[RMDB]
RNA sequence: GGGAACGACUCGAGUAGAGUCGAAAAGGAGCGGGAGCACGAGGGCGCGGCGCGGCUGGCCCAACUGCACGGCCGCGCUGUGGAGACGCAGGCGGCAGCUCUGCGCGCGGCGGAAGCUUCCCUUGCCCCUAUAAGCAAAAUUCGUUUUGCUUAUAGGAAAAGAAACAACAACAACAAC
Reactivity to DMS in 0.01 (KOAc 150mM, MgCl2 10mM, bicine 150mM(pH8.5), 24C), signal-to-noise 9, nucleotides 027 to 126: g010g010a050g010c140g020g010g010a070g020c020a120c090g000a250g010g000g010c050g010c010g010g010c010g020c030g010g000c010u000g000g000c030c100c110a050a120c260u000g000c020a100c030g010g000c000c010g010c000g010c010u000g020u000g000g010a120g020a170c030g010c020a030g000g000c040g000g010c160a100g000c090u010c060u000g010c010g010c020g000c030g000g000c020g000g000a140a110g000c020u000u000c010c010c010u000u000g000c050c040
Reactivity to 2A3 in 0.01 (KOAc 150mM, MgCl2 10mM, bicine 150mM(pH8.5), 24C), signal-to-noise 7, nucleotides 027 to 126: g070g010a030g020c100g010g030g020a050g010c020a010c090g050a080g040g100g030c110g010c010g100g000c100g020c030g110g010c010u010g020g010c010c030c030a090a070c070u120g000c070a080c140g020g000c010c000g000c000g000c010u020g000u010g010g050a090g010a020c020g010c030a020g070g040c000g070g020c030a030g010c040u040c060u150g010c030g000c000g010c010g080g000c030g010g030a070a020g010c000u060u060c010c000c000u020u080g040c000c010